RNA sequence: GGGAACGACUCGAGUAGAGUCGAAAAUUGUCCUUUCCUUCCGGAGAGAUAAAUAAAACAUGGGAAGUUUUCAUUUCUCUGCAAAAUCAACUUGUAGAUCAAGAUGUUCCUCUAGGUUCUACCAUUACCCUAGUAGUAAAUUCGUUUACUACUAGGGAAAAGAAACAACAACAACAAC
Reactivity to DMS in 0.01 (KOAc 150mM, MgCl2 10mM, bicine 150mM(pH8.5), 24C), signal-to-noise 6, nucleotides 027 to 126: u010u010g010u000c040c010u000u010u000c020c010u000u010c270c110g000g000a050g000a060g010a080u000a050a090a090u010a060a050a080a060c100a040u000g010g000g010a130a080g000u010u000u000u000c060a040u000u000u000c070u000c000u000g010c090a030a040a090a140u010c200a060a100c130u000u000g000u000a030g000a040u000c100a060a050g000a050u000g020u000u000c020c010u000c140u000a090g010g000u000u000c040u000a140c040c050a120u010u010a150
Reactivity to 2A3 in 0.01 (KOAc 150mM, MgCl2 10mM, bicine 150mM(pH8.5), 24C), signal-to-noise 7, nucleotides 027 to 126: u000u030g090u060c010c000u020u040u040c020c000u090u080c050c060g060g010a030g010a000g020a070u090a120a180a040u090a020a070a040a010c050a070u120g050g030g040a030a080g020u020u010u040u060c010a020u010u060u010c030u010c000u020g020c030a030a040a060a230u120c020a030a100c030u040u040g020u050a030g020a080u070c030a040a010g020a070u050g020u030u000c010c000u040c040u060a060g050g050u070u050c030u090a100c020c020a090u060u150a080